[RMDB]
RNA sequence: GGGAACGACUCGAGUAGAGUCGAAAAGAAAAACGAUGAAUGAGGCUAGUAUACGCAAGGCGCUAUCAAAACAAACAAAAUCCGAUGCAAGCGUAUAUUAAGAAAUGCAUUGGAAAAGAAAAGAAAAGCAUAUCAGUAGCUUCGGCUACUGAUAUGCAAAAGAAACAACAACAACAAC
Reactivity to DMS in 0.01 (KOAc 150mM, MgCl2 10mM, bicine 150mM(pH8.5), 24C), signal-to-noise 1, nucleotides 027 to 126: g030a200a150a000a080a060c180g000a100u000g010a030a300u000g000a000g000g070c000u010a100g000u000a000u000a020c050g000c030a080a150g000g040c010g030c020u000a090u000c040a040a020a130a150c190a060a110a200c300a020a020a190a140u000c010c000g000a000u000g000c000a010a030g030c050g000u040a050u000a060u100u090a000a110g010a000a190a000u000g000c000a000u000u000g000g000a000a060a160a070g000a130a140a050a000g000a080a120a060a210
Reactivity to 2A3 in 0.01 (KOAc 150mM, MgCl2 10mM, bicine 150mM(pH8.5), 24C), signal-to-noise 1, nucleotides 027 to 126: g100a040a020a000a000a000c060g090a030u130g000a010a120u070g000a050g100g000c000u030a000g000u010a030u000a060c000g000c040a070a130g120g000c070g020c120u070a000u200c010a010a000a000a200c060a050a000a170c020a020a150a000a000u000c020c000g000a000u000g000c010a040a020g030c040g020u000a020u000a000u020u140a100a010g070a040a010a010u040g000c000a000u000u020g030g000a000a140a000a000g060a000a080a010a000g060a000a140a000a000
Background
The record gives the reactivity of an RNA of 177 nucleotides to DMS and 2A3. The DMS profile rests on 1,015 reads. Reactivities are given for positions 27 through 126. The RNA was probed in 150 mM KOAc, 10 mM MgCl2 and 150 mM bicine (pH 8.5) at 24 C.